[RMDB]
This 170-nucleotide RNA was probed chemically with 2A3 and DMS.
RNA sequence: GGGAACGACUCGAGUAGAGUCGAAAACGAUGGGGAGGGAUGCUAGGAGUUGGGGGAGACCGAAGCGAGGAGGAAAGCAAAGAAAGCAACGGGGCUAGCGAGUGGAUGUUCCUCCCCCCGAAGGUCCGUACUUGUGGGUUCGCCCACAAGAAAAGAAACAACAACAACAAC
Reactivity to 2A3 in 0.01 (KOAc 150mM, MgCl2 10mM, bicine 150mM(pH8.5), 24C), signal-to-noise 5, nucleotides 027 to 129: c050g060a060u120g000g000g000g000a040g010g000g000a050u110g050c030u060a040g000g020a050g050u120u120g030g000g000g010g000a020g010a000c010c020g020a040a000g040c050g000a010g000g030a010g000g000a080a020a010g040c070a040a030a070g060a060a100a010g020c010a040a050c060g010g010g020g030c020u020a020g030c010g020a040g010u070g030g040a090u150g020u040u030c010c000u030c000c000c000c000c000c000g050a080a010g030g030u030c010c010g010u030a060
Reactivity to DMS in 0.01 (KOAc 150mM, MgCl2 10mM, bicine 150mM(pH8.5), 24C), signal-to-noise 4, nucleotides 027 to 129: c110g000a070u000g000g010g010g010a000g000g060g000a040u030g000c100u070a060g080g000a080g000u080u000g050g010g070g020g000a050g030a060c080c020g020a140a090g000c140g030a050g000g000a010g030g020a010a010a020g000c150a070a070a060g050a130a040a050g010c110a000a000c120g050g020g010g020c090u000a070g000c110g010a060g040u070g060g020a000u040g050u030u010c040c020u000c020c000c030c010c020c020g050a060a050g010g000u030c020c050g000u000a130